[RMDB]
RNA sequence: GGGAACGACUCGAGUAGAGUCGAAAAUGGAACCGCAGUUGGUUCCUCGGAACUAAACUCGUGGUUCCUGUGGUUCACACCUGACCUCCUGAGCAGAAAAGAAAAAAGAAGGCGGCUCGGAGGAGCGCCGUGAAAAACACUUCGGUGUUUUUCACGGAAAAGAAACAACAACAACAAC
Reactivity to DMS in 0.01 (KOAc 150mM, MgCl2 10mM, bicine 150mM(pH8.5), 24C), signal-to-noise 2, nucleotides 027 to 126: u010g010g000a010a000c000c010g000c000a030g000u010u000g000g000u010u010c000c010u000c250g010g000a010a010c000u010a040a030a040c010u000c160g060u010g000g030u000u000c000c000u000g020u010g010g010u000u000c120a110c150a110c040c010u020g010a190c030c010u000c000c010u030g010a030g040c000a130g000a110a060a100a110g010a000a070a100a080a120a080g020a210a170g050g010c210g030g000c020u000c020g030g020a030g000g010a050g000c120g010
Reactivity to 2A3 in 0.01 (KOAc 150mM, MgCl2 10mM, bicine 150mM(pH8.5), 24C), signal-to-noise 1, nucleotides 027 to 126: u030g000g000a010a000c020c000g000c030a000g010u030u010g000g030u000u000c010c000u030c110g070g020a000a020c010u130a300a020a000c010u090c190g010u000g000g000u000u000c000c010u000g030u030g030g060u050u050c060a070c020a050c090c060u050g100a090c010c010u020c010c050u200g000a010g000c030a000g110a170a230a090a060g180a110a200a080a100a040a080g100a080a020g110g040c140g020g020c010u000c010g010g000a050g010g000a060g010c050g050
Conditions: 150 mM KOAc, 10 mM MgCl2 and 150 mM bicine (pH 8.5), 24 C. An RNA of 177 nucleotides, treated with DMS and 2A3 and read out base by base. 2A3 is a SHAPE reagent: it acylates the 2'-hydroxyl of flexible nucleotides of all four kinds. For DMS the reverse transcriptase was MarathonRT. The data come from the RNA Mapping Database (RMDB), library VIROID.